[RMDB]
RNA sequence: GGGAACGACUCGAGUAGAGUCGAAAAGAAAGAUGUAGCAUGUGCCAUCGCCACCAAGUGUACUUCAGUGGACAUUUUGUCAGCAUGAAAUCUGAGCACACUUGGUAGCGGUGCCGUGAGCUACUAACUCCUUAGACAACUUCGGUUGUCUAAGGAGAAAAGAAACAACAACAACAAC
Reactivity to 2A3 in 0.01 (KOAc 150mM, MgCl2 10mM, bicine 150mM(pH8.5), 24C), signal-to-noise 7, nucleotides 027 to 126: g180a020a070a010g090a050u110g000u000a000g000c000a020u040g170u210g090c080c010a010u010c010g000c010c000a000c000c000a000a010g000u000g000u000a020c040u100u120c000a020g000u060g030g030a030c020a040u140u140u120u250g150u100c050a040g040c050a140u090g110a070a040a040u030c000u000g010a000g000c020a010c000a010c000u000u000g000g010u000a000g000c000g000g000u000g000c000c000g020u040g030a030g040c010u000a000c000u010a020a060
Reactivity to DMS in 0.01 (KOAc 150mM, MgCl2 10mM, bicine 150mM(pH8.5), 24C), signal-to-noise 3, nucleotides 027 to 126: g020a060a100a060g010a120u000g030u030a000g010c000a100u010g000u020g040c300c040a020u000c020g010c000c030a030c000c010a000a010g040u000g010u000a050c010u020u020c000a000g020u010g050g020a280c000a040u020u000u030u030g010u000c100a110g010c140a130u000g020a060a090a120u020c010u000g010a020g000c040a000c000a000c000u000u000g000g010u000a000g010c040g000g040u000g000c100c020g010u010g000a120g010c020u000a020c010u010a070a150